[RMDB]
RNA sequence: GGGAACGACUCGAGUAGAGUCGAAAAAGGGAUGACCAACUGUCCUGGUUUGCCUGGGACUGAGGGGUUACUGAGGACACGUGAAGUCCCUGGGCAAACUGGAGUGGUUGGUUCAUUCUAGCUUUUACUGGCGGUAAGCUUUCGAGCUUACCGCCAGAAAAGAAACAACAACAACAAC
Reactivity to 2A3 in 0.01 (KOAc 150mM, MgCl2 10mM, bicine 150mM(pH8.5), 24C), signal-to-noise 1, nucleotides 027 to 126: a000g000g000g000a000u010g050a000c000c040a010a000c000u070g020u160c000c000u050g010g000u020u000u000g050c000c000u020g030g000g000a020c000u000g020a200g020g170g050g040u130u130a000c120u260g100a000g080g030a070c040a070c240g300u070g030a010a000g000u010c030c000c020u040g000g040g000c000a000a000a000c000u000g000g010a130g110u080g020g010u000u000g010g000u040u000c040a000u020u000c000u000a000g060c000u080u080u000u070a280
Chemical mapping of a 177-nucleotide RNA with 2A3. The data come from the RNA Mapping Database (RMDB), library RFM100. The RNA was probed in 150 mM KOAc, 10 mM MgCl2 and 150 mM bicine (pH 8.5) at 24 C.